[RMDB]
RNA sequence: GGGAACGACUCGAGUAGAGUCGAAAACUGCCGCCGGGACGCAGUGAUCCUCGCAGGGUCGCACGGUCGCCUCGGGUCGGCCUCGUGUCGGCUCGACCUGCGAGGGGAGCGAGUGGCUAGCCCGACCAAAACUUUCUCGCCUUCGGGCGAGAAAGAACAGUGGGUAUACGUUCGCGUAUACCCACUGAAAAGAAACAACAACAACAAC
Reactivity to 2A3 in 0.01 (KOAc 150mM, MgCl2 10mM, bicine 150mM(pH8.5), 24C), signal-to-noise 2, nucleotides 027 to 156: c030u060g020c010c020g030c010c010g220g180g050a100c020g020c010a130g210u000g000a010u010c000c000u000c000g000c010a000g000g040g100u140c060g040c090a060c070g030g060u050c020g000c010c010u050c010g000g000g000u010c000g000g010c000c020u140c130g280u300g030u040c000g000g020c000u020c020g050a050c000c010u000g000c000g000a010g000g000g000g010a000g000c000g000a020g000u020g000g000c020u010a010g020c000c030c020g020a040c030c020a010a040a000a060c000u000u000u010c000u020c010g000c010c010u090u100c170g050g000g000c000g010a000g000a000a000a000g000a020a020

An RNA of 207 nucleotides, treated with 2A3 and read out base by base. For 2A3, 2,063 sequencing reads were counted. 2A3 adducts were read by reverse transcription with SuperScript II with manganese.